[RMDB]
RNA sequence: GGGAACGACUCGAGUAGAGUCGAAAACAUUGGCAUUUCGAUGCCAAUGGGUCUGCGUCGCGCGGCCGCCGAGUCGUUCCCGGGGCCGCGUGACGCAGUUUGGGCAGCUCGAGUUCGCUCGAGCUAAUACCGUCUACAUAUUCGUAUGUAGACGGUAAAAAGAAACAACAACAACAAC
Reactivity to 2A3 in 0.01 (KOAc 150mM, MgCl2 10mM, bicine 150mM(pH8.5), 24C), signal-to-noise 1, nucleotides 027 to 126: c000a000u000u000g000g020c010a020u030u080u130c240g100a030u030g000c000c020a000a000u000g000g000g040u040c010u010g020c000g010u020c000g000c000g020c000g000g000c060c040g040c110c120g020a040g030u010c010g000u020u020c000c000c010g020g010g020g040c040c020g020c020g000u000g000a000c010g000c000a010g000u000u110u020g010g020g060c070a010g000c010u000c000g000a000g010u090u040c140g030c050u000c010g000a010g010c000u000a000a030
Reactivity to DMS in 0.01 (KOAc 150mM, MgCl2 10mM, bicine 150mM(pH8.5), 24C), signal-to-noise 3, nucleotides 027 to 126: c000a000u000u000g000g010c000a010u000u000u020c170g020a030u000g000c000c010a000a000u000g000g000g010u010c010u000g010c010g000u000c010g000c010g020c000g000g000c000c020g020c210c100g000a040g000u000c010g000u000u010c000c000c000g020g010g010g020c000c000g030c000g030u000g000a010c010g000c000a000g000u000u010u010g000g010g020c200a060g010c000u000c000g000a010g020u000u010c230g000c000u010c000g000a020g010c010u000a000a110
Conditions: 150 mM KOAc, 10 mM MgCl2 and 150 mM bicine (pH 8.5), 24 C. Chemical mapping of a 177-nucleotide RNA with 2A3 and DMS. For 2A3 the reverse transcriptase was SuperScript II with manganese.